The record gives the reactivity of an RNA of 207 nucleotides to 2A3. The data come from the RNA Mapping Database (RMDB), library OK3TST.
RNA sequence: GGGAACGACUCGAGUAGAGUCGAAAAGCUGCAUGAAGAGCUGUUUGAGCGUCUGUGUACUAUCUUCAAUACUUCUACUUGCCCUCAGCAGUGAGUUAAUAAACUUGAACUGCACUGAACAACCAGCCACUCGGGGUGAUCUGUUCUACAACGCCAAUCGCCAUCACAACUUCGGUUGUGAUGGCGAAAAAGAAACAACAACAACAAC
Reactivity to 2A3 in 0.01 (KOAc 150mM, MgCl2 10mM, bicine 150mM(pH8.5), 24C), signal-to-noise 1, nucleotides 027 to 156: g050c040u020g010c050a020u070g120a100a090g080a000g050c050u070g090u250u200u220g130a050g000c060g070u090c130u050g120u020g000u020a060c010u060a090u070c040u080u030c000a030a090u100a180c040u080u090c020u050a050c000u050u100g030c020c020c000u020c040a030g000c020a040g000u000g100a000g000u070u050a090a210u060a260a270a020c010u010u040g040a050a010c000u040g010c020a010c090u030g010a060a010c030a040a100c060c070a020g040c000c020a080c040u110c100g190g000g000g000u040g060a000u110c020u040g020u000u000c000u060a100c050a130a000c070g080c060c080a000a050
The RNA was probed in 150 mM KOAc, 10 mM MgCl2 and 150 mM bicine (pH 8.5) at 24 C.